[RMDB]
RNA sequence: GGGAACGACUCGAGUAGAGUCGAAAAUUCGAUUCCCGCCACCUCCACCUAAGAGUUUCGGAGAGUUCUUAGGUGGGGGUGUACUGGCUUCGACAGGGCGGGCAAAGGUGCGCAGGCAACUCGUCAGGCUUAACACAAUGUUCGCAUUGUGUUAAGCAAAAGAAACAACAACAACAAC
Reactivity to 2A3 in 0.01 (KOAc 150mM, MgCl2 10mM, bicine 150mM(pH8.5), 24C), signal-to-noise 5, nucleotides 027 to 126: u090u040c050g050a030u030u020c010c000c000g010c010c000a000c000c000u000c000c000a010c000c000u000a010a000g010a010g030u050u110u210c170g050g040a100g010a010g160u030u000c000u000u000a000g000g000u000g000g000g000g000g000u000g000u000a000c000u000g030g020c020u050u060c050g030a040c030a090g060g000g000c020g000g010g010c030a090a070a030g060g010u050g010c040g000c020a010g040g000c000a010a060c040u030c030g100u070c040a030g120
Reactivity to DMS in 0.01 (KOAc 150mM, MgCl2 10mM, bicine 150mM(pH8.5), 24C), signal-to-noise 3, nucleotides 027 to 126: u030u010c080g010a290u000u000c000c000c010g000c300c000a010c010c000u000c010c000a020c010c010u000a020a000g000a020g010u000u000u020c110g010g020a160g010a070g000u010u000c000u000u010a000g010g020u010g000g000g000g010g000u000g020u000a010c040u000g010g010c060u000u010c070g010a040c100a110g010g010g030c040g000g000g020c090a020a070a080g020g010u000g000c030g010c090a070g000g000c060a070a090c040u000c020g000u000c110a150g020